Structure probing data (DMS and 2A3) for a 177-nucleotide construct. Source: RMDB library M2PK90, as collected in RNAgym. DMS adducts were read by reverse transcription with MarathonRT.
[RMDB]
RNA sequence: GGGAACGACUCGAGUAGAGUCGAAAAGCUGAGUAUACGAGGUUAGUUCAUUCUCGUAUGCAUGAUUGCACAAAUUAAAAUCUCAAUUUGGAUCAGGGCCUCCCUCCAGCGACGGCCGAACAUACAAGCCCUACACAUUAUUCGUAAUGUGUAGGGCAAAAGAAACAACAACAACAAC
Reactivity to DMS in 0.01 (KOAc 150mM, MgCl2 10mM, bicine 150mM(pH8.5), 24C), signal-to-noise 3, nucleotides 027 to 126: g030c010u000g010a220g030u020a010u000a000c010g000a000g030g020u010u010a090g020u000u000c230a100u000u000c000u010c010g020u000a020u000g000c050a100u000g020a080u010u000g020c120a240c040a010a000a020u020u010a050a080a120a110u010c150u010c110a030a040u000u010u000g010g000a080u020c090a090g010g010g000c020c010u000c010c010c000u000c100c030a040g000c070g010a110c150g000g010c020c010g010a020a050c090a040u000a100c200a030a080
Reactivity to 2A3 in 0.01 (KOAc 150mM, MgCl2 10mM, bicine 150mM(pH8.5), 24C), signal-to-noise 2, nucleotides 027 to 126: g030c000u050g030a000g020u030a010u000a000c000g000a000g070g050u080u110a070g130u240u300c030a010u220u040c010u000c000g020u030a000u000g030c000a040u090g020a030u000u230g030c040a020c010a140a010a030u100u070a050a120a170a230u050c080u040c140a050a120u000u040u050g050g020a050u070c080a060g000g070g070c000c000u050c000c000c000u110c030c010a000g020c000g020a010c030g030g050c010c020g020a020a000c020a020u130a040c030a000a060
Background: Conditions: 150 mM KOAc, 10 mM MgCl2 and 150 mM bicine (pH 8.5), 24 C. The DMS profile rests on 1,638 reads.